[RMDB]
An RNA of 177 nucleotides, treated with DMS and 2A3 and read out base by base. DMS adducts were read by reverse transcription with MarathonRT. 2A3 adducts were read by reverse transcription with SuperScript II with manganese. The 2A3 profile rests on 607 reads.

RNA sequence: GGGAACGACUCGAGUAGAGUCGAAAAUCCAGGGCAACGUGUUUCGUCCCUGGGUUAGCCGGGACCUAAGCCGAGGCCGAGAGGCGUAGGCGAUGGACAUCAGGUUAAUAAUCCUGAGCUCGCAACCAUUCGAUGGUGCUUUCGAGCACCAUCGAAUAAAAGAAACAACAACAACAAC
Reactivity to DMS in 0.01 (KOAc 150mM, MgCl2 10mM, bicine 150mM(pH8.5), 24C), signal-to-noise 2, nucleotides 027 to 126: u010c000c000a000g000g000g000c160a060a050c060g000u000g080u000u020u000c050g010u020c000c000c000u000g000g020g010u010u000a020g000c070c000g000g000g000a250c000c000u000a160a230g000c000c020g000a230g030g000c000c000g010a150g020a160g030g000c000g000u020a300g000g000c000g000a120u040g000g040a090c130a050u000c000a100g060g010u020u000a100a140u020a130a070u020c000c000u000g000a030g060c090u000c030g030c140a140a130c020c030
Reactivity to 2A3 in 0.01 (KOAc 150mM, MgCl2 10mM, bicine 150mM(pH8.5), 24C), signal-to-noise 2, nucleotides 027 to 126: u000c010c000a000g000g050g000c150a180a030c190g030u080g120u080u080u180c250g130u300c040c000c000u000g000g000g000u000u000a010g050c120c000g000g000g040a050c000c000u010a060a060g000c080c000g000a030g020g060c000c000g020a130g010a070g090g010c000g060u010a020g040g000c000g000a000u000g000g000a000c010a090u010c010a010g100g000u060u100a020a120u020a070a000u230c000c000u000g000a000g000c000u010c030g000c000a020a050c010c070